Chemical mapping of a 177-nucleotide RNA with 2A3 and DMS. The data come from the RNA Mapping Database (RMDB), library OK2TST. Conditions: 150 mM KOAc, 10 mM MgCl2 and 150 mM bicine (pH 8.5), 24 C. For DMS the reverse transcriptase was MarathonRT. Reactivities are given for positions 27 through 126.

RNA sequence: GGGAACGACUCGAGUAGAGUCGAAAAGGGUCAAUCCGCUGAGAGCUGUAGCCCGACUUGAUCUGCACGUCACCGUUGACGUUGGGGAGGCUGGCUACCUCCACCUCAUCACCAACCUUGAACGAAAAGUCGAUGAAUGGUUCGCCAUUCAUCGACUAAAAGAAACAACAACAACAAC
Reactivity to 2A3 in 0.01 (KOAc 150mM, MgCl2 10mM, bicine 150mM(pH8.5), 24C), signal-to-noise 1, nucleotides 027 to 126: g000g000g000u040c050a000a080u050c030c010g010c050u110g140a130g010a010g010c040u040g080u120a010g000c000c010c040g120a190c060u020u080g120a150u070c020u120g060c050a030c030g030u000c000a030c090c160g180u080u140g000a000c010g040u030u120g000g000g000g000a040g010g030c010u010g000g050c000u000a060c010c000u010c010c030a040c010c000u000c030a080u070c000a030c010c000a000a040c000c040u060u160g080a080a000c020g110a060a020a000
Reactivity to DMS in 0.01 (KOAc 150mM, MgCl2 10mM, bicine 150mM(pH8.5), 24C), signal-to-noise 1, nucleotides 027 to 126: g000g000g070u010c100a030a100u020c080c140g030c040u000g000a090g000a050g000c060u010g010u000a090g010c040c000c020g000a170c080u010u020g000a100u010c050u000g020c140a060c020g010u000c000a080c200c200g030u000u010g020a030c070g010u000u000g040g010g020g000a070g020g070c060u010g000g010c070u000a080c020c040u000c010c000a090c010c020u010c010a050u000c050a150c040c060a020a040c030c030u000u030g020a090a170c100g000a100a140a090